RNA sequence: GGGAACGACUCGAGUAGAGUCGAAAAACGAUAUCGGUACAACUAGCUUUCGAGCUAGUUGUACCGAUAUCGUCAGGGGUGAUUAGCUCAGGGGAGAGCACCUCCCUAUUAGUCACUCAAUCUCAAUAAGUAUUCGUACUUAUUGAGAUUGAGUGACUCUGUCCAUUUUAUUCGUAAAAUGGACAGAAAAAGAAACAACAACAACAAC
Reactivity to DMS in 0.01 (KOAc 150mM, MgCl2 10mM, bicine 150mM(pH8.5), 24C), signal-to-noise 2, nucleotides 027 to 156: a010c000g000a010u010a010u000c020g010g040u000a000c000a010a020c010u010a020g010c000u000u000u010c270g010a040g010c000u000a020g040u000u000g010u000a000c000c000g010a010u000a000u010c000g030u000c020a070g010g000g020g010u010g010a140u000u000a100g010c040u000c060a150g020g040g010g000a180g000a140g000c040a070c040c020u000c010c010c010u010a060u010u010a050g020u010c000a010c000u010c000a000a020u000c000u000c000a000a010u000a000a020g010u000a050u000u000c290g030u000a020c000u010u000a010u000u010g000a010g010a000u000u000g010a020g020u000g000a000c000
Reactivity to 2A3 in 0.01 (KOAc 150mM, MgCl2 10mM, bicine 150mM(pH8.5), 24C), signal-to-noise 2, nucleotides 027 to 156: a000c010g010a000u000a000u000c000g000g000u000a000c040a000a000c030u000a020g000c020u000u050u300c300g040a000g000c010u200a000g010u300u300g000u300a010c020c010g000a000u000a000u000c000g010u000c000a000g000g000g000g000u040g020a200u070u190a010g000c010u010c050a030g020g040g030g000a080g010a000g000c010a030c000c000u030c020c000c000u060a150u080u090a010g000u000c000a000c000u000c000a000a000u030c000u010c000a000a000u000a010a000g000u000a010u020u160c230g030u030a000c000u000u000a000u000u000g000a000g000a000u000u000g000a000g000u000g000a000c000